[RMDB]
RNA sequence: GGGAACGACUCGAGUAGAGUCGAAAAGGAUUCGCGGUAACAGCAAAUGGGGCUCUCACUCCUACCAUCUCAGUGACAGUUUAAAGCGCACCCUACCGCAGGAAAGUGCCCAUAUUUGCACACACGCGGCAGAGGGCAGGGCUGAAAAGGGGCCCUACAUCUCUUUACUAUUCGUAGUAAAGAGAUGAAAAGAAACAACAACAACAAC
Reactivity to 2A3 in 0.01 (KOAc 150mM, MgCl2 10mM, bicine 150mM(pH8.5), 24C), signal-to-noise 4, nucleotides 027 to 156: g060g010a100u100u070c030g020c020g060g080u150a170a060c040a130g050c040a040a030a050u070g000g000g000g010c010u000c010u020c040a060c040u030c020c000u020a100c030c040a110u090c070u030c140a050g020u060g070a100c010a050g030u010u050u250a140a120a050g050c060g000c040a070c010c000c020u040a030c030c040g020c040a010g000g050a100a090a020g000u010g010c010c030c050a040u100a060u140u100u080g010c020a030c000a000c010a010c070g000c010g020g030c020a030g030a090g170g020g000c020a030g030g040g010c020u020g050a040a060a040a070g000g010g040g000c000c000c000u010a010
Reactivity to DMS in 0.01 (KOAc 150mM, MgCl2 10mM, bicine 150mM(pH8.5), 24C), signal-to-noise 3, nucleotides 027 to 156: g030g000a150u010u010c050g050c030g040g000u000a070a160c060a190g010c020a040a040a100u010g020g020g020g000c000u000c020u000c040a040c090u000c020c000u040a070c040c050a080u000c080u000c040a080g030u000g010a130c060a100g000u000u010u000a070a080a110g010c060g000c030a070c010c010c010u000a080c040c020g040c040a090g040g010a090a070a100g020u000g020c020c080c080a130u010a060u010u010u010g040c030a120c050a110c120a140c070g010c010g010g010c030a040g000a090g010g010g040c020a050g020g030g060c050u010g020a030a020a090a100g040g040g010g010c000c000c000u010a040
Overview: The data come from the RNA Mapping Database (RMDB), library OK3TST. Structure probing data (2A3 and DMS) for a 207-nucleotide construct. For 2A3, 2,923 sequencing reads were counted. DMS adducts were read by reverse transcription with MarathonRT. Values are in units of 0.01, from 0 to 300, in steps of 10.